[RMDB]
RNA sequence: GGGAACGACUCGAGUAGAGUCGAAAAGCCGAUGGCGGCCUGAAGCUCUAAACCUCAGUCGGAUACGUUUUUAUGGUGGCUUUACAUAAAAAAAGAGAUUUUAAAGCACCGCAAAUUUCUGCUGUUUGAGACUGGCUUUGGAAAUUUGUUAAACUAGGAAGGAACAUUACUUCGGUAAUGUUCCUUCAAAAGAAACAACAACAACAAC
Reactivity to 2A3 in 0.01 (KOAc 150mM, MgCl2 10mM, bicine 150mM(pH8.5), 24C), signal-to-noise 1, nucleotides 027 to 156: g050c020c000g050a080u180g090g300c090g000g030c000c020u040g000a050a000g000c000u000c060u040a190a300a300c050c000u020c020a000g000u080c060g050g000a130u090a030c070g000u040u030u000u040u120a160u130g090g000u050g040g030c000u010u020u030a020c000a050u200a080a080a000a000a000a000a000g140a000g030a060u290u300u000u060a020a000a000g000c000a000c110c000g100c000a050a160a050u030u040u020c090u060g080c020u000g090u110u040u010g060a060g020a050c090u080g000g000c000u130u040u080g000g000a000a000a110u000u010u010g000u020u090a070a060a060c050u110a070g080